[RMDB]
RNA sequence: GGGAACGACUCGAGUAGAGUCGAAAAGAAAGAAAGAAAGAAGGGGCGGGAGGGGGGUCCCCGGUGCUCGGAUCUCGAGGGUGCUUAUUGUUCGGUCCGAGCCUGGGUCUCCCUCUUCCCCCCAUAAGUCGUACUGUCAAUUCGUUGACAGUACGACAAAAGAAACAACAACAACAAC
Reactivity to 2A3 in 0.01 (KOAc 150mM, MgCl2 10mM, bicine 150mM(pH8.5), 24C), signal-to-noise 1, nucleotides 027 to 126: g100a030a020a010g030a070a080a010g030a040a280a020g090a060a090g000g000g040g030c160g000g020g000a000g000g000g010g000g000g010u010c010c080c000c000g000g000u170g000c000u000c000g020g020a060u080c130u030c150g030a050g030g160g000u150g060c030u110u300a210u260u300g120u110u040c000g010g010u010c000c000g000a000g000c010c000u000g000g000g000u000c020u020c000c000c000u020c010u000u010c060c000c000c000c000c000a000u000a000a000